[RMDB]
RNA sequence: GGGAACGACUCGAGUAGAGUCGAAAACUUAGGAUUGUGCAGAAAUCGAAUCUCCAGGGGCGUUAUGCCAUCCGAUCCCAGGUCGAUGGUCUGGUAGAGAGUCUGCGUGGACCAUUUGUAGAAGUUAGCUACGUAUCCUAUUCGUAGGAUACGUAGCAAAAGAAACAACAACAACAAC
Reactivity to 2A3 in 0.01 (KOAc 150mM, MgCl2 10mM, bicine 150mM(pH8.5), 24C), signal-to-noise 2, nucleotides 027 to 126: c030u070u120a060g030g020a060u090u090g040u110g080c000a010g050a050a100a030u130c040g050a090a110u060c040u000c090c080a090g010g040g040g000c060g100u220u080a050u100g010c010c010a020u000c020c000g010a000u010c020c010c010a010g050g110u070c030g020a020u010g000g000u010c000u010g010g010u060a000g010a000g000a030g190u020c000u010g000c010g080u070g000g000a000c000c000a010u030u040u160g040u040a080g010a240a020g060u090u300a020
Reactivity to DMS in 0.01 (KOAc 150mM, MgCl2 10mM, bicine 150mM(pH8.5), 24C), signal-to-noise 4, nucleotides 027 to 126: c300u010u020a060g000g000a030u010u020g000u040g030c010a010g000a080a070a090u050c030g010a080a080u040c040u000c100c100a120g000g000g000g030c030g010u000u010a090u000g000c000c000a040u000c000c010g010a120u020c010c010c010a090g000g000u020c110g000a010u000g000g010u000c000u000g020g030u000a000g000a170g000a190g010u040c010u010g000c030g030u020g000g000a030c000c010a010u010u000u030g020u000a040g000a090a080g000u010u010a120

This 177-nucleotide RNA was probed chemically with 2A3 and DMS. Conditions: 150 mM KOAc, 10 mM MgCl2 and 150 mM bicine (pH 8.5), 24 C. For DMS the reverse transcriptase was MarathonRT. Values cover nucleotides 27 to 126.